[RMDB]
Source: RMDB library TTRDEL, as collected in RNAgym.
This 177-nucleotide RNA was probed chemically with 2A3 and DMS.
The 2A3 profile rests on 2,053 reads.
2A3 adducts were read by reverse transcription with SuperScript II with manganese.
Values cover nucleotides 27 to 126.
Conditions: 150 mM KOAc, 10 mM MgCl2 and 150 mM bicine (pH 8.5), 24 C.

RNA sequence: GGGAACGACUCGAGUAGAGUCGAAAAGAUAUGGAGGCAUGAUUCGAGAUGGGUCGGAAACGACCUUCGAUGAGAAUCACUAGCCUCCUAAGUCAAACGAAUCGGAGACUUCGGUCUCCGAUUCGAACACGUAGGCAAAGUUCGCUUUGCCUACGUGAAAAGAAACAACAACAACAAC
Reactivity to 2A3 in 0.01 (KOAc 150mM, MgCl2 10mM, bicine 150mM(pH8.5), 24C), signal-to-noise 1, nucleotides 027 to 126: g040a030u030a030u160g010g000a030g000g000c020a020u010g030a010u050u010c020g010a010g010a260u200g020g090g000u000c010g000g040a040a050a000c010g000a000c060c030u030u010c040g030a030u110g020a010g000a060a000u010c010a030c110u060a080g020c010c000u000c000c000u000a000a010g010u000c030a000a020a110c010g010a020a000u000c010g000g000a050g000a000c000u190u140c300g060g020u000c000u020c000c030g000a000u000u010c000g000a000a010
Reactivity to DMS in 0.01 (KOAc 150mM, MgCl2 10mM, bicine 150mM(pH8.5), 24C), signal-to-noise 3, nucleotides 027 to 126: g010a040u000a300u010g000g000a030g030g030c020a180u000g000a020u000u010c000g030a150g080a020u000g030g000g010u000c000g020g000a070a070a220c000g000a010c000c000u000u000c040g020a140u000g000a210g000a030a010u000c000a060c240u030a160g000c010c000u000c000c000u020a000a050g000u010c010a090a100a230c000g000a000a010u000c010g020g010a060g010a020c000u000u010c200g030g030u000c010u000c020c010g020a010u000u000c000g000a050a090